[RMDB]
RNA sequence: GGGAACGACUCGAGUAGAGUCGAAAAAGUUGUCUUCAGAGGGCUUUCUCUACAAGUUGACUGAGGAAGGAGCGUCCAGUGACAAACACAGUCGGUUGUAUAUAACUCAGACACAAGGAAUGGGAGGUCAUUCGCCAUAUUUCGAUAUGGCGAAUGAAAAAGAAACAACAACAACAAC
Reactivity to 2A3 in 0.01 (KOAc 150mM, MgCl2 10mM, bicine 150mM(pH8.5), 24C), signal-to-noise 3, nucleotides 027 to 126: a000g070u060u050g020u050c060u070u040c030a040g020a110g120g000g060c010u100u110u000c050u000c000u020a040c030a120a030g050u100u080g080a050c020u000g010a030g060g000a160a010g040g020a040g030c060g000u030c030c040a100g030u070g060a050c050a050a120a010c040a010c000a070g040u060c030g020g040u030u050g130u020a060u010a040u030a150a040c020u010c030a010g030a030c030a000c020a080a100g120g040a150a000u070g040g020g010a070g000g050
Reactivity to DMS in 0.01 (KOAc 150mM, MgCl2 10mM, bicine 150mM(pH8.5), 24C), signal-to-noise 3, nucleotides 027 to 126: a060g010u000u000g000u000c040u000u010c120a070g000a170g040g000g000c090u000u010u000c050u010c040u000a080c090a060a090g000u010u020g020a080c000u010g020a040g010g010a190a080g030g000a100g000c050g000u020c090c050a090g000u020g000a140c110a080a080a110c160a080c110a060g000u000c030g020g030u000u000g010u030a070u030a100u040a040a090c040u010c020a080g000a100c090a010c110a200a070g010g010a080a030u010g000g020g000a100g000g000